Source: RMDB library RFMREP, as collected in RNAgym. Chemical mapping of a 177-nucleotide RNA with 2A3 and DMS. 2A3 is a SHAPE reagent: it acylates the 2'-hydroxyl of flexible nucleotides of all four kinds. The reactions ran in a buffer of 150 mM KOAc, 10 mM MgCl2 and 150 mM bicine (pH 8.5), at 24 C. For DMS, 28,382 sequencing reads were counted.
RNA sequence: GGGAACGACUCGAGUAGAGUCGAAAAACAGGUCUUCGGACCUGUGACCCCGAUGAUGCCAACAGGGUAGCUGCCGAGGCGAUGAGGAAGCCGUUCCAGACUGAGGGCCGUAGACGUUCGCGUCUACCCUAACUAUGUUUUUCGAAACAUAGUUAGGAAAAGAAACAACAACAACAAC
Reactivity to 2A3 in 0.01 (KOAc 150mM, MgCl2 10mM, bicine 150mM(pH8.5), 24C), signal-to-noise 9, nucleotides 027 to 126: a000c000a000g000g000u000c010u050u090c200g130g010a000c000c000u000g000u000g010a020c000c010c000c010g070a130u160g020a020u120g060c010c020a060a040c040a160g040g040g040u050a050g030c040u050g000c030c030g050a050g000g040c050g030a090u100g020a030g070g050a070a020g020c020c020g030u080u010c020c010a040g030a090c040u060g030a090g020g040g020c020c040g010u010a010g000a010c010g010u040u040c190g040c010g070u000c010u000a020c010
Reactivity to DMS in 0.01 (KOAc 150mM, MgCl2 10mM, bicine 150mM(pH8.5), 24C), signal-to-noise 9, nucleotides 027 to 126: a010c000a000g010g010u000c000u000u010c200g040g010a010c000c000u000g000u000g000a110c120c000c010c090g010a090u010g010a080u000g010c030c030a070a110c110a080g010g010g010u000a050g010c030u000g010c040c030g010a130g000g010c060g000a070u010g010a140g010g000a080a060g010c030c030g010u000u000c030c020a090g000a120c070u000g010a100g000g000g010c110c100g000u000a010g000a020c010g020u000u010c210g020c020g010u000c000u000a020c030